[RMDB]
RNA sequence: GGGAACGACUCGAGUAGAGUCGAAAAGUUAUGUGUCAUUUAGAAAUCAACCAAAUGCAAUUUAUGAAUUUCAAUAUGCAUAUGGUUUACCAGACUAUGGAAUAAUUGGCAUGCAAUUACCAUUAACGUUCACUGCCGGGUUCGCCCGGCAGUGAACAAAAGAAACAACAACAACAAC
Reactivity to 2A3 in 0.01 (KOAc 150mM, MgCl2 10mM, bicine 150mM(pH8.5), 24C), signal-to-noise 2, nucleotides 027 to 126: g000u000u000a060u180g000u000g000u000c000a000u000u040u060a010g150a060a100a080u130c000a000a000c000c000a090a090a090u000g000c030a040a050u000u040u030a030u140g300a300a130u000u290u030c060a020a000u020a130u170g040c000a000u030a220u000g000g080u060u050u020a000c000c000a000g240a270c220u150a200u200g000g000a010a000u030a060a030u010u030g000g000c000a000u000g040c010a030a030u050u000a030c000c000a110u010u250a040a130c140